[RMDB]
RNA sequence: GGGAACGACUCGAGUAGAGUCGAAAAGUGUCGCUGCACUUACAACUGGUUUGACUUUUCAAACUGUGCGGCCUGGCAAUUUUAACCAAGACUUCUAUGAUUUCGUGGUAUCUAAAGGUUUCUUUAAGGAGGCCUGUCUUCGGACAGGCCAAAAGAAACAACAACAACAAC
Reactivity to 2A3 in 0.01 (KOAc 150mM, MgCl2 10mM, bicine 150mM(pH8.5), 24C), signal-to-noise 2, nucleotides 027 to 129: g080u080g000u020c000g000c050u060g060c010a000c010u150u190a020c130a020a000c010u090g050g100u060u040u000g090a100c090u060u070u300u130c100a070a000a000c000u030g000u000g000c000g000g000c000c060u050g000g000c000a000a000u000u000u000u080a110a000c000c010a020a020g030a050c000u040u000c070u020a130u060g180a130u060u000u160c140g000u010g030g000u100a020u000c050u130a130a000a000g100g010u000u000u010c000u000u000u000a060a040g200g000a120
Reactivity to DMS in 0.01 (KOAc 150mM, MgCl2 10mM, bicine 150mM(pH8.5), 24C), signal-to-noise 3, nucleotides 027 to 129: g040u000g000u030c000g000c090u060g000c000a020c000u060u090a140c300a020a100c260u040g100g000u160u000u010g080a110c300u080u000u170u030c030a030a030a030c050u050g000u000g030c000g000g090c090c180u240g170g000c000a000a010u100u050u000u000a030a030c000c020a250a010g070a000c030u080u190c080u120a110u020g000a100u010u010u010c120g010u090g000g020u000a030u070c100u000a060a170a060g000g020u060u030u000c010u070u040u050a300a030g000g000a000

An RNA of 170 nucleotides, treated with 2A3 and DMS and read out base by base. The RNA was probed in 150 mM KOAc, 10 mM MgCl2 and 150 mM bicine (pH 8.5) at 24 C. The DMS profile rests on 2,174 reads. It was measured as part of the RMDB library 15KLIB. Reactivities are given for positions 27 through 129.